An RNA of 207 nucleotides, treated with 2A3 and DMS and read out base by base.
The reactions ran in a buffer of 150 mM KOAc, 10 mM MgCl2 and 150 mM bicine (pH 8.5), at 24 C.
For 2A3 the reverse transcriptase was SuperScript II with manganese.
Values are in units of 0.01, from 0 to 300, in steps of 10.
[RMDB]
RNA sequence: GGGAACGACUCGAGUAGAGUCGAAAACGUGUUUCGACACGCGAAAGCCGUAGGCGUGAACUACGUGUGAAGUGAGCGUUGAAACAUGCUUCGAAAGAGGCAUGUGGAGCUCAUGGAGGCACGCACGCCUAAACGGGAGCAACGGAUUCGUCCGUAACUGAUUAACAGAUUUCGAUCUGUUAAUCAGAAAAGAAACAACAACAACAAC
Reactivity to 2A3 in 0.01 (KOAc 150mM, MgCl2 10mM, bicine 150mM(pH8.5), 24C), signal-to-noise 6, nucleotides 027 to 156: c050g020u040g040u030u100u100c170g070a040c030a040c140g060c030g130a230a070a010g090c000c000g010u020a000g000g010c010g010u020g030a120a100c110u180a070c300g000u030g060u120g010a040a010g010u000g010a000g000c040g090u240u060g010a000a000a000c000a000u000g000c000u000u000c010g050a060a060a030g010a000g000g020c000a010u000g000u010g000g000a010g000c000u000c000a000u010g000g010a060g270g000c000a000c000g010c000a000c000g000c010c000u010a020a020a000c010g000g010g010a070g040c030a050a030c010g010g000a020u060u080c200g080u010c050c000g000u020a070a080
Reactivity to DMS in 0.01 (KOAc 150mM, MgCl2 10mM, bicine 150mM(pH8.5), 24C), signal-to-noise 3, nucleotides 027 to 156: c030g020u000g020u000u000u000c270g010a080c010a010c010g080c010g000a090a120a100g020c000c000g030u000a020g020g020c000g040u000g000a110a240c030u010a210c010g030u000g030u000g010a300a300g000u000g010a030g030c010g000u000u000g020a250a120a040c000a000u000g000c000u000u020c010g010a190a110a230g010a030g010g000c000a020u010g000u020g000g000a170g010c020u000c000a020u010g010g010a300g010g000c010a000c020g000c010a030c000g000c000c010u000a010a020a090c030g000g000g000a110g020c070a140a070c000g010g000a110u000u000c180g010u000c040c020g020u000a110a190